[RMDB]
RNA sequence: GGGAACGACUCGAGUAGAGUCGAAAAGUGGGUUCAUGGGCAGCUGAAGCACUGGCGCGUACAGGUAUUGGUGCGAUCACCUUGAUUGAUAUGGAUGAUGUUUGCGUCACAAAUACUAAUCGUCAGAUGAGAUACCGUCCUUCGGGACGGUAUCUCAAAAAGAAACAACAACAACAAC
Reactivity to 2A3 in 0.01 (KOAc 150mM, MgCl2 10mM, bicine 150mM(pH8.5), 24C), signal-to-noise 1, nucleotides 027 to 126: g070u060g000g040g040u060u090c090a080u120g030g000g000c000a000g050c050u080g190a070a000g020c010a020c060u020g040g010c000g000c050g080u100a020c050a150g010g000u000a090u050u100g040g010u000g060c050g020a000u020c060a050c010c040u000u140g200a140u020u090g080a020u090a020u300g150g000a140u050g020a060u020g120u050u080u140g000c010g030u050c000a050c070a000a090a030u080a120c040u170a040a020u130c010g050u040c020a020g000a050
Reactivity to DMS in 0.01 (KOAc 150mM, MgCl2 10mM, bicine 150mM(pH8.5), 24C), signal-to-noise 1, nucleotides 027 to 126: g010u010g000g000g000u000u000c050a070u010g030g000g000c040a060g030c030u000g000a070a120g020c130a090c050u020g000g010c000g040c180g040u010a090c260a070g000g000u000a030u000u000g020g040u000g000c050g020a040u000c020a030c060c010u000u000g040a100u010u000g040a070u020a070u000g010g010a120u000g000a040u000g010u010u020u000g030c070g000u020c040a030c030a040a000a120u020a050c040u000a120a090u010c040g010u040c080a080g030a190
The record gives the reactivity of an RNA of 177 nucleotides to 2A3 and DMS.
The data come from the RNA Mapping Database (RMDB), library OK2TST.
DMS adducts were read by reverse transcription with MarathonRT.
The RNA was probed in 150 mM KOAc, 10 mM MgCl2 and 150 mM bicine (pH 8.5) at 24 C.